[RMDB]
RNA sequence: GGGAACGACUCGAGUAGAGUCGAAAAACAAGGUUUCGACCUUGUAAAAACCGUAGGCUAAGAGCUUGGAUUUAUAGGAGAAUUAUAUUCGAAAGAGUAUAAGGACCCUAUUGUCAGCUCGAAGCCUAAACGGAAAAAAGGCCCGUUCGCGGGCCAAGUCUCUUAAUACAUUCGUGUAUUAAGAGACAAAAGAAACAACAACAACAAC
Reactivity to 2A3 in 0.01 (KOAc 150mM, MgCl2 10mM, bicine 150mM(pH8.5), 24C), signal-to-noise 2, nucleotides 027 to 156: a000c030a020a000g030g030u110u130u240c240g130a070c000c010u000u000g010u020a170a000a000a000a020c000c000g000u000a010g020g000c010u010a040a010g000a010g010c030u090u230g090g050a120u300u300u080a020u030a000g010g000a020g000a020a020u000u000a000u000a000u000u000c000g020a060a080a030g000a060g000u000a000u000a020a000g000g000a020c010c010c000u000a000u000u000g000u000c000a000g020c000u000c000g000a000a000g000c000c000u000a000a000a000c000g010g090a020a020a050a090a050a160g070g050c300c130c010g060u060u060c300g010c030g190g000g010c000c000a070a020
An RNA of 207 nucleotides, treated with 2A3 and read out base by base. Conditions: 150 mM KOAc, 10 mM MgCl2 and 150 mM bicine (pH 8.5), 24 C. Source: RMDB library RNAMAK, as collected in RNAgym.